[RMDB]
RNA sequence: GGGAACGACUCGAGUAGAGUCGAAAAGCACUUAAAUAUAACUGGCAAAACUAACAGUUUUAACCAAAACGUAGCAUUAGCUGCCUAAUAAGCGCAGCGAGCUCUUCCUGACAUUGCCUAUGUGUCUGUGAAGAGCACAUCCAAGUAGGCUACGCUUGUACAAGUUUAGCUUCGGCUAAACUUGUACAAAAGAAACAACAACAACAAC
Reactivity to 2A3 in 0.01 (KOAc 150mM, MgCl2 10mM, bicine 150mM(pH8.5), 24C), signal-to-noise 1, nucleotides 027 to 156: g000c010a040c080u100u090a010a110a100u200a070u080a230a060c050u040g060g040c130a020a020a080a090c060u190a060a050c090a080g010u040u040u050u050a070a060c080c030a020a180a070a040c040g010u010a040g000c020a010u040u030a000g000c000u030g040c020c020u180a300a300u110a260a080g090c130g030c030a010g060c060g000a000g000c000u000c000u000u010c000c000u000g000a000c000a000u120u150g080c000c000u120a130u120g050u000g000u010c040u060g060u060g070a000a000g010a000g000c000a000c000a000u030c020c000a070a170g050u000a040g090g090c000u010a000c000g050c000u040u020